[RMDB]
RNA sequence: GGGAACGACUCGAGUAGAGUCGAAAAGCAAAGUGUAAUGAGAAGCAUGAUGAGGAAUUCUGCGACAUGUUAAGGUUGUUUGACUUCAACAAACAGGCAAUUCAGAGGCUCAAAUCAGAGGCACAAAACACUUCCAUGCAUUCGUGCAUGGAAGUGUAAAAGAAACAACAACAACAAC
Reactivity to 2A3 in 0.01 (KOAc 150mM, MgCl2 10mM, bicine 150mM(pH8.5), 24C), signal-to-noise 2, nucleotides 027 to 126: g140c100a130a010a000g020u070g010u110a090a110u120g050a060g010a200a000g030c040a020u100g000a000u060g000a060g090g000a100a080u060u010c000u020g000c000g080a070c050a070u110g030u100u090a090a040g050g080u010u010g090u010u090u070g040a070c040u020u010c040a030a080c020a020a060a000c020a030g030g000c000a000a040u230u210c000a010g030a060g080g000c000u050c090a070a120a060u000c020a000g010a090g140g010c020a000c010a060a130a020
Reactivity to DMS in 0.01 (KOAc 150mM, MgCl2 10mM, bicine 150mM(pH8.5), 24C), signal-to-noise 2, nucleotides 027 to 126: g090c180a090a100a070g000u070g000u000a050a230u020g000a080g000a110a120g030c020a050u080g000a140u030g000a150g060g000a080a090u050u000c020u000g020c050g000a120c080a150u000g020u000u030a050a030g030g010u020u000g000u050u010u010g010a070c110u000u000c090a050a020c100a040a040a040c060a050g000g010c040a130a070u040u000c010a060g000a100g020g000c000u000c000a030a040a090u010c020a020g000a080g000g000c000a030c070a040a000a050
This 177-nucleotide RNA was probed chemically with 2A3 and DMS. DMS adducts were read by reverse transcription with MarathonRT. Conditions: 150 mM KOAc, 10 mM MgCl2 and 150 mM bicine (pH 8.5), 24 C. For 2A3, 1,566 sequencing reads were counted. It was measured as part of the RMDB library OK1LIB.